[RMDB]
RNA sequence: GGGAACGACUCGAGUAGAGUCGAAAAGUUGCGAUGUUAAACGGAUUAAUAUAUGUCAUAGGUGGAAUCGUUAAAGGUGACACAUGUACCGACGCACUAGAGAGUUUAUCAGAAGAUGGAUGGAUGAAGCAUCAACGUCUUCCAAUAAAAAUGUCCAAGCGAAUGUAAAGUUCGCUUUACAUUCGCUAAAAGAAACAACAACAACAAC
Reactivity to 2A3 in 0.01 (KOAc 150mM, MgCl2 10mM, bicine 150mM(pH8.5), 24C), signal-to-noise 1, nucleotides 027 to 156: g070u100u020g050c060g030a040u060g000u070u060a060a080a030c040g000g030a020u080u080a130a080u080a010u050a100u190g030u020c060a040u040a120g020g050u060g030g030a140a130u120c070g000u030u160a050a050a110g030g000u010g010a040c000a000c010a050u110g060u070a020c000c030g000a000c010g040c000a020c030u040a020g040a000g000a000g030u000u100u140a120u110c080a010g020a040a010g040a000u010g000g060a020u120g000g010a020u080g080a050a000g050c010a010u020c020a020a110c010g000u040c000u030u010c020c000a010a000u040a020a090a000a040a010u110g000u030c020c020a050
Reactivity to DMS in 0.01 (KOAc 150mM, MgCl2 10mM, bicine 150mM(pH8.5), 24C), signal-to-noise 1, nucleotides 027 to 156: g030u000u000g010c020g040a170u000g040u000u000a040a130a130c030g020g000a160u000u020a170a080u010a100u000a030u000g020u000c030a040u010a040g010g000u010g030g010a060a080u000c110g020u000u000a040a030a110g000g040u010g010a120c010a010c060a020u000g020u000a090c080c000g030a120c070g020c030a090c100u000a060g010a120g000a160g020u000u000u010a040u000c060a050g010a020a010g010a030u000g000g020a140u000g000g030a140u000g000a100a180g020c020a050u000c020a000a040c040g040u000c000u000u010c010c030a040a020u030a010a000a050a070a110u010g010u000c070c040a110